This 177-nucleotide RNA was probed chemically with 2A3 and DMS. 2A3 adducts were read by reverse transcription with SuperScript II with manganese. For 2A3, 4,633 sequencing reads were counted. For DMS, 9,914 sequencing reads were counted. High 2A3 reactivity points to a flexible backbone, as in loops and unpaired stretches. The reactions ran in a buffer of 150 mM KOAc, 10 mM MgCl2 and 150 mM bicine (pH 8.5), at 24 C.

[RMDB]
RNA sequence: GGGAACGACUCGAGUAGAGUCGAAAAGAUAUGGAUCUUGGCUGCUUUUGACGCCUCCAUGAUCGGAAACGAUCAGGAGGCGAUAAGCAGCAAGAUCCUAAGUCAAACGAAUCGUUCGCGAUUCGAAGUAUAAAUCGUUCUUCGGAACGAUUUAUACAAAAGAAACAACAACAACAAC
Reactivity to 2A3 in 0.01 (KOAc 150mM, MgCl2 10mM, bicine 150mM(pH8.5), 24C), signal-to-noise 2, nucleotides 027 to 126: g000a010u040a030u140g000g000a000u010c020u040u050g300g020c000u020g030c010u070u080u110u210g200a180c130g020c010c010u000c030c020a300u050g030a000u040c020g000g000a050a040a020c010g000a000u000c000a000g020g000a000g000g000c010g010a000u000a000a000g000c000a000g000c010a010a000g010a000u000c000c000u000a030a000g000u000c020a050a090a050c000g010a000a000u020c020g010u180u100c300g020c020g260a000u010u010c010g020a140a010
Reactivity to DMS in 0.01 (KOAc 150mM, MgCl2 10mM, bicine 150mM(pH8.5), 24C), signal-to-noise 6, nucleotides 027 to 126: g000a030u000a300u010g000g000a010u000c000u010u010g030g030c000u000g000c000u010u000u000u010g020a260c090g020c000c000u000c000c000a070u010g020a000u010c010g020g000a100a080a180c010g010a010u000c000a050g000g010a020g020g030c000g010a020u000a010a000g020c000a010g000c000a010a000g000a000u000c000c000u000a020a090g000u000c020a130a140a300c020g000a010a010u000c000g030u000u010c260g020c020g010a010u000u000c000g010a050a130